[RMDB]
RNA sequence: GGGAACGACUCGAGUAGAGUCGAAAAUUCAUCUUCUGAUGAUGACGAGACAGGGGGCUCAUGACAGUGUAGAUCUGGUCCUUCUGAAGUUCCUUCAUUGGUAAAUACUGUGGAGGCCCACUCACGGCGUACCGUGUCAUUUCGAUGACACGGUACGAAAAGAAACAACAACAACAAC
Reactivity to 2A3 in 0.01 (KOAc 150mM, MgCl2 10mM, bicine 150mM(pH8.5), 24C), signal-to-noise 2, nucleotides 027 to 126: u030u010c000a010u020c040u260u040c110u230g060a060u060g010a020u020g050a050c060g040a020g050a050c010a050g000g000g020g020g000c020u000c060a030u150g030a030c010a020g060u060g100u300a040g010a130u010c010u030g050g000u030c000c000u100u050c020u010g030a060a050g010u010u070c020c000u000u060c050a050u000u170g010g020u050a110a080a050u170a200c020u030g020u010g050g020a010g020g000c020c000c010a010c020u130c020a050c060g050g020
Reactivity to DMS in 0.01 (KOAc 150mM, MgCl2 10mM, bicine 150mM(pH8.5), 24C), signal-to-noise 2, nucleotides 027 to 126: u000u010c010a040u000c010u020u010c210u010g010a050u000g000a020u000g000a140c110g000a090g000a300c030a030g010g000g000g020g020c060u010c020a040u010g030a030c080a140g010u020g050u000a080g000a110u000c020u010g000g000u000c000c040u000u010c030u000g010a080a130g000u010u000c030c010u000u010c050a020u000u000g020g010u000a090a060a080u000a070c040u000g000u000g000g010a020g000g000c060c010c040a100c090u000c050a080c180g000g040